RNA sequence: GGGAACGACUCGAGUAGAGUCGAAAAGAUAUGGAAAGCAGGGAGGUCUCGAUACUCCUCGACGAAGGAUCUCGGAAACGAGAUCCAGAGAGGAUGUAUCGAGACCAUCGAUCUGCUUUCCUAAGUCGCCUAAAUGAAAGUUCGCUUUCAUUUAGGCAAAAGAAACAACAACAACAAC
Reactivity to 2A3 in 0.01 (KOAc 150mM, MgCl2 10mM, bicine 150mM(pH8.5), 24C), signal-to-noise 2, nucleotides 027 to 126: g020a030u160a060u140g000g000a000a020a010g000c000a000g000g030g000a020g000g020u000c000u000c010g020a010u000a010c010u000c020c010u040c050g300a300c020g030a250a030g010g000a010u000c000u000c000g040g050a110a070a040c030g000a000g010a010u020c000c000a000g000a000g000a010g030g000a040u200g000u010a010u000c000g000a000g000a000c000c000a000u000c000g010a000u000c000u000g000c000u000u000u000c000c010u000a020a000g000u010c090
Reactivity to DMS in 0.01 (KOAc 150mM, MgCl2 10mM, bicine 150mM(pH8.5), 24C), signal-to-noise 3, nucleotides 027 to 126: g010a120u010a300u000g000g000a020a010a000g020c010a020g000g010g020a030g020g020u000c000u000c000g010a030u000a000c010u000c000c000u000c000g000a170c300g000a140a130g010g000a010u000c010u000c010g010g000a130a110a260c010g020a000g000a000u000c000c000a010g000a090g000a000g000g000a040u010g020u010a010u000c000g000a010g010a010c000c010a010u000c180g000a060u000c000u000g000c000u000u010u010c010c000u000a040a160g000u010c080
Source information: This 177-nucleotide RNA was probed chemically with 2A3 and DMS. 2A3 is a SHAPE reagent: it acylates the 2'-hydroxyl of flexible nucleotides of all four kinds. For 2A3, 9,184 sequencing reads were counted. The data come from the RNA Mapping Database (RMDB), library TTRINS. The DMS profile rests on 4,274 reads. The RNA was probed in 150 mM KOAc, 10 mM MgCl2 and 150 mM bicine (pH 8.5) at 24 C.